Background
The record gives the reactivity of an RNA of 207 nucleotides to DMS and 2A3. The reactions ran in a buffer of 150 mM KOAc, 10 mM MgCl2 and 150 mM bicine (pH 8.5), at 24 C. Reactivities are given for positions 27 through 156. Values are in units of 0.01, from 0 to 300, in steps of 10. For 2A3, 788 sequencing reads were counted. For DMS, 2,077 sequencing reads were counted.
RNA sequence: GGGAACGACUCGAGUAGAGUCGAAAAUUGAUAAUUUGUUGUGUAACUUCAUUUAAAUGAAUUGAAACAAAUUUAAUACAAGUGGAUGUAGGAUGACCGUCCGUCCUUUACAUUGGUAUAAAAGUGAACGACACAGACCUCUUCGGAGGUCUGUGAAGCUAAAUAGAUGCUUCGGCAUCUAUUUAGCAAAAGAAACAACAACAACAAC
Reactivity to DMS in 0.01 (KOAc 150mM, MgCl2 10mM, bicine 150mM(pH8.5), 24C), signal-to-noise 1, nucleotides 027 to 156: u000u020g030a170u010a060a050u000u000u000g020u000u010g000u000g030u010a110a130c070u000u000c000a050u000u000u000a060a180a130u020g010a030a090u000u030g000a140a090a140c020a020a020a040u000u020u000a100a070u010a050c040a030a030g040u000g000g000a110u000g030u000a030g050g010a010u000g000a090c010c260g010u000c070c040g010u010c000c010u010u000u000a040c030a070u010u000g000g020u000a040u010a000a060a110a080g010u000g010a020a070c050g030a300c010a010c020a000g010a010c000c010u000c000u000u000c250g030g010a010g040g010u000c010u000g010u010g000a010a080
Reactivity to 2A3 in 0.01 (KOAc 150mM, MgCl2 10mM, bicine 150mM(pH8.5), 24C), signal-to-noise 1, nucleotides 027 to 156: u150u090g030a000u040a220a050u090u000u080g000u000u020g030u020g020u130a090a050c050u040u000c000a060u050u110u150a150a300a110u070g020a060a000u060u100g060a140a040a000c000a000a100a040u060u080u170a150a060u120a050c000a100a060g040u020g110g020a040u150g000u090a020g020g020a010u020g020a020c030c090g030u030c000c030g000u000c000c000u090u050u010a030c000a050u090u040g100g000u140a090u100a050a090a000a000g090u090g080a040a000c050g020a010c000a000c000a010g000a000c020c000u000c000u020u030c100g090g000a010g000g000u000c000u000g000u000g000a000a000